This 207-nucleotide RNA was probed chemically with DMS and 2A3. The reactions ran in a buffer of 150 mM KOAc, 10 mM MgCl2 and 150 mM bicine (pH 8.5), at 24 C. It was measured as part of the RMDB library OK3TST.
[RMDB]
RNA sequence: GGGAACGACUCGAGUAGAGUCGAAAAUGUGCAGGCUGACUGCAGCGAUUGCUUUUGAGCGUGUGCUCCUACAAAGGUUAAGGGGCCUGGGGGAUUUGGCAUCCUGGUAGCACAACAGAACCACCUGGGGGAAAUUUAAAAAGAAACAAAAGCAGGAAUGAUAUUACCUAUUCGUAGGUAAUAUCAUAAAAGAAACAACAACAACAAC
Reactivity to DMS in 0.01 (KOAc 150mM, MgCl2 10mM, bicine 150mM(pH8.5), 24C), signal-to-noise 1, nucleotides 027 to 156: u020g010u000g010c010a070g010g000c060u000g000a210c010u020g010c000a100g040c110g020a150u000u000g020c010u030u000u010u010g010a090g040c010g030u010g040u000g010c000u000c010c000u010a140c080a060a120a100g000g010u010u000a110a170g020g020g020g100c070c060u010g050g020g030g030g000a190u000u000u000g020g000c070a070u000c020c000u000g010g040u000a060g000c060a070c040a060a080c020a100g010a140a160c060c000a060c060c010u000g030g020g020g030g000a070a040a130u000u010u020a010a020a140a080a140g010a080a040a130c060a060a040a020a060g020c040a090g000g010a080
Reactivity to 2A3 in 0.01 (KOAc 150mM, MgCl2 10mM, bicine 150mM(pH8.5), 24C), signal-to-noise 2, nucleotides 027 to 156: u150g010u030g000c010a030g020g060c050u070g030a110c030u040g020c010a050g020c020g170a150u060u090g010c010u050u110u050u120g080a070g000c030g010u060g020u080g050c010u010c030c000u060a090c060a080a220a080g020g010u180u170a070a050g000g070g020g000c000c020u110g010g050g000g010g030a100u100u050u140g060g000c020a020u050c000c010u020g000g060u060a020g000c000a000c010a140a120c000a020g060a090a020c010c010a020c010c050u060g000g000g010g000g050a000a050a030u070u160u110a040a130a000a000a000g050a020a040a010c050a030a040a080a010g070c030a030g060g070a060